[RMDB]
RNA sequence: GGGAACGACUCGAGUAGAGUCGAAAAGGAGAGCACUCCGGCCCGAAGGGUUGAGUAGCACCCAGAGGGAGGAAAUCACACGGAGAGAAACAGACAAAUCACCUCCAGAGGACCCCUUCAGCGAACACGAGCGCUCGGUUCGCCGAGCGCAAAAGAAACAACAACAACAAC
Reactivity to 2A3 in 0.01 (KOAc 150mM, MgCl2 10mM, bicine 150mM(pH8.5), 24C), signal-to-noise 1, nucleotides 027 to 129: g020g000a110g000a000g050c010a020c070u060c010c040g060g010c060c030c030g010a070a060g000g000g010u130u110g000a050g050u140a010g020c000a010c000c010c010a010g060a030g000g010g010a100g000g040a050a070a000u050c050a030c050a020c080g040g040a000g000a000g020a030a080a020c030a000g170a000c040a000a080a030u150c030a020c030c000u010c040c040a000g000a030g000g010a040c000c000c000c000u060u020c040a000g030c020g040a030a000c080a000c120g050a030
Reactivity to DMS in 0.01 (KOAc 150mM, MgCl2 10mM, bicine 150mM(pH8.5), 24C), signal-to-noise 3, nucleotides 027 to 129: g000g000a020g030a060g010c180a060c100u010c000c040g050g050c040c020c050g000a240a030g010g020g090u040u010g000a120g020u000a100g010c040a050c040c000c000a040g020a300g000g000g000a120g040g000a070a070a050u030c100a110c050a180c070g030g000a000g000a060g030a090a070a040c100a030g000a070c130a070a030a050u020c030a120c050c010u000c070c000a170g040a060g160g020a160c020c020c000c070u060u040c030a000g020c040g010a050a000c030a050c090g040a070
This 170-nucleotide RNA was probed chemically with 2A3 and DMS. For DMS, 5,217 sequencing reads were counted. For 2A3 the reverse transcriptase was SuperScript II with manganese. The 2A3 profile rests on 2,832 reads. It was measured as part of the RMDB library 15KLIB. The reactions ran in a buffer of 150 mM KOAc, 10 mM MgCl2 and 150 mM bicine (pH 8.5), at 24 C.